Chemical mapping of a 207-nucleotide RNA with 2A3. The reactions ran in a buffer of 150 mM KOAc, 10 mM MgCl2 and 150 mM bicine (pH 8.5), at 24 C. Source: RMDB library PKBLNG, as collected in RNAgym.
[RMDB]
RNA sequence: GGGAACGACUCGAGUAGAGUCGAAAACAUACCUCGAUAAUACGUGUUCGCACGUAUUAUCGAGGUAUGCAUGGGGUUCGAAUCCCCCCUUUACCCCGGGUAUGGGGCCCAGAACGGAUUUCAUGUAAUCUGCGUUCGCGCAGAUUACAUGAAAUCCCCGCAAUAUGAGUUUCGACUCAUAUUGCGGAAAAGAAACAACAACAACAAC
Reactivity to 2A3 in 0.01 (KOAc 150mM, MgCl2 10mM, bicine 150mM(pH8.5), 24C), signal-to-noise 1, nucleotides 027 to 156: c000a000u000a000c000c000u000c000g000a000u000a000a000u000a000c000g000u050g020u060u130c170g010c110a000c000g010u000a020u000u000a030u000c000g000a010g000g000u000a000u000g000c000a030u010g010g020g000g010u010u050c020g030a030a100u020c020c000c020c000c000c000u030u110u250a080c000c010c010c010g040g000g020u190a140u190g040g000g010g010c050c040c060a050g090a090a020c050g000g000a000u000u000u000c000a000u000g000u000a000a000u000c020u010g020c000g030u040u040c220g000c010g000c090a000g000a000u000u000a000c000a010u000g000a000a000a000u000c000c000